An RNA of 207 nucleotides, treated with 2A3 and DMS and read out base by base. For 2A3 the reverse transcriptase was SuperScript II with manganese. Conditions: 150 mM KOAc, 10 mM MgCl2 and 150 mM bicine (pH 8.5), 24 C. The 2A3 profile rests on 2,462 reads. DMS adducts were read by reverse transcription with MarathonRT.

RNA sequence: GGGAACGACUCGAGUAGAGUCGAAAAGUCAUGCCUUCGGGCAUGACAGGUACCGAGAGGUACCAAAUAGCGUACAGCAGGCUCAGACUGUACGCUAAGUAAGUGUGUGUUCAAUAAGGGCCAAUUGAACACACACUCCGUUGGUCCAAGAGCGUGAUAUGCUAUUAGGUUUCGACCUAAUAGCAUAAAAAGAAACAACAACAACAAC
Reactivity to 2A3 in 0.01 (KOAc 150mM, MgCl2 10mM, bicine 150mM(pH8.5), 24C), signal-to-noise 3, nucleotides 027 to 156: g000u000c000a000u000g000c000c000u070u110c280g040g000g000c000a000u000g000a000c010a000g000g010u000a010c020c000g010a030g000a020g080g020u030a010c010c010a100a030a020u040a000g000c000g000u000a000c000a000g030c010a040g120g020c050u050c030a010g040a170c020u000g010u010a000c020g020c000u000a030a010g110u060a030a000g000u000g000u000g000u000g000u020u000c020a020a000u100a080a110g040g070g040c000c020a010a000u000u000g010a000a000c000a010c000a000c010a000c000u010c000c000g090u050u110g020g030u020c080c060a090a030g020a010g040c040g010u040g050a060
Reactivity to DMS in 0.01 (KOAc 150mM, MgCl2 10mM, bicine 150mM(pH8.5), 24C), signal-to-noise 1, nucleotides 027 to 156: g020u000c000a000u010g020c000c000u000u000c290g020g030g020c010a000u000g000a000c020a000g000g020u010a030c000c000g010a300g010a300g030g020u000a010c010c000a010a060a100u000a010g000c010g050u000a010c000a030g030c030a090g000g000c020u000c000a140g010a020c020u000g020u000a010c020g010c000u000a000a030g000u000a050a020g010u010g040u000g010u000g000u000u000c000a010a000u000a070a070g010g040g050c020c010a130a080u000u000g010a020a020c000a010c010a000c000a000c010u000c040c080g010u000u010g020g020u010c130c110a140a140g030a030g030c010g060u000g010a190